[RMDB]
RNA sequence: GGGAACGACUCGAGUAGAGUCGAAAAGCAUGGGAAUACCUGAGGCCUAAGAUAGGCCGUAGGCGAUCGCAUCAACCGGGUAACGGAGAUGAGAUAUAGUGGUGGCACUAUUGCUGUACACAUUGUGACAUGUAACGUCGUUCGCGAUGUUGCAUGUAAAAGAAACAACAACAACAAC
Reactivity to DMS in 0.01 (KOAc 150mM, MgCl2 10mM, bicine 150mM(pH8.5), 24C), signal-to-noise 9, nucleotides 027 to 126: g010c040a030u010g000g000g010a100a180u040a080c050c000u000g000a140g000g010c000c000u010a110a140g020a160u030a020g010g010c000c000g010u020a030g000g010c130g000a030u000c010g000c010a050u000c010a090a110c010c010g000g010g030u070a110a120c020g010g010a250g000a020u000g000a040g000a020u000a050u010a050g010u010g010g010u010g000g000c260a110c050u000a040u020u010g010c020u000g000u020a090c070a070c100a120u020u010g000u010g000
Reactivity to 2A3 in 0.01 (KOAc 150mM, MgCl2 10mM, bicine 150mM(pH8.5), 24C), signal-to-noise 9, nucleotides 027 to 126: g030c030a040u080g030g000g080a110a040u080a140c010c010u050g040a060g020g010c000c010u110a200a080g100a300u270a050g050g000c000c000g010u030a010g030g010c040g040a030u020c020g000c040a010u010c020a050a270c020c010g020g020g120u140a140a070c030g020g000a040g010a020u040g040a020g020a040u090a010u050a120g080u070g080g030u070g040g020c040a020c060u080a080u140u190g010c030u020g040u120a030c060a010c020a070u060u200g080u070g070